The data come from the RNA Mapping Database (RMDB), library RNAMAK. An RNA of 207 nucleotides, treated with 2A3 and read out base by base. The RNA was probed in 150 mM KOAc, 10 mM MgCl2 and 150 mM bicine (pH 8.5) at 24 C. For 2A3, 1,870 sequencing reads were counted.

RNA sequence: GGGAACGACUCGAGUAGAGUCGAAAAGGGGUCGGUGCGAUAAGGUCCGAUAGCCGAGGAUCUAUGGCUGAAGCCUCCACGGCCAUAGGGAGGCUAGAUGCGGACCUUUUGACGCACCGACGGAGGCACCCAAAACCGCUCUGUUCGCAGAGCGGAACGAUGUAACAGUCUUCGGACUGUUACAUCGAAAAGAAACAACAACAACAAC
Reactivity to 2A3 in 0.01 (KOAc 150mM, MgCl2 10mM, bicine 150mM(pH8.5), 24C), signal-to-noise 1, nucleotides 027 to 156: g070g040g030g000u000c000g000g000u000g030c010g050a120u040a300a000g000g000u010c020c000g010a040u020a000g020c000c000g030a170g010g030a000u000c000u000a010u000g000g000c010u010g000a150a010g020c000c000u020c000c000a020c000g020g000c000c000a000u000a000g010g000g000a000g000g000c000u020a040g030a100u270g130c030g010g000a000c010c000u000u040u050u080g030a010c030g030c000a010c000c000g000a000c000g000g000a000g010g000c010a030c000c030c000a050a100a060a080c000c000g010c010u000c000u010g100u110u080c250g000c100a000g000a000g000c000g000g000a000a000